[RMDB]
RNA sequence: GGGAACGACUCGAGUAGAGUCGAAAAGGUUCGUGACAAGUACACUGCAGUUGUAACAUUGGCUGAUGUUGUGUGAUCAGUCACAAGAAUAGCAGGAUCACAUUCCAACAGGAGUUAAGAUUGUUGAUCUCAUCUUCUAUAGUAAGUCCUAAAGGCAUAAAUUAGCCCCAUUCGUGGGGCUAAUUUAAAAAGAAACAACAACAACAAC
Reactivity to DMS in 0.01 (KOAc 150mM, MgCl2 10mM, bicine 150mM(pH8.5), 24C), signal-to-noise 3, nucleotides 027 to 156: g020g020u000u020c060g070u000g010a100c030a060a140g020u000a100c080a150c060u000g020c020a070g010u010u000g030u000a090a160c070a170u000u010g010g020c010u000g000a040u010g000u000u000g030u000g020u000g020a090u000c020a080g050u000c040a070c090a090a090g000a080a120u000a080g000c110a120g000g010a070u000c070a050c020a130u000u000c010c020a040a110c090a040g000g000a090g030u000u000a150a030g000a090u000u000g020u000u020g010a110u000c010u000c050a090u000c030u000u000c020u000a130u000a110g010u000a060a070g020u020c020c030u000a030a060a120g020g030c040a240
Reactivity to 2A3 in 0.01 (KOAc 150mM, MgCl2 10mM, bicine 150mM(pH8.5), 24C), signal-to-noise 1, nucleotides 027 to 156: g030g000u070u010c020g030u050g000a000c030a110a000g060u020a050c050a000c040u070g000c010a000g000u070u070g080u150a180a020c050a170u070u120g020g000c030u000g010a020u010g060u210u050g040u000g090u050g070a070u070c000a010g020u070c030a050c000a030a020g010a010a000u030a030g000c020a000g030g000a000u030c010a000c000a000u180u040c020c010a020a000c000a090g040g030a090g010u050u050a030a050g030a100u010u110g050u000u020g070a060u000c040u010c030a020u040c020u000u020c030u010a010u000a050g070u040a140a000g040u030c000c010u100a090a050a130g050g010c080a010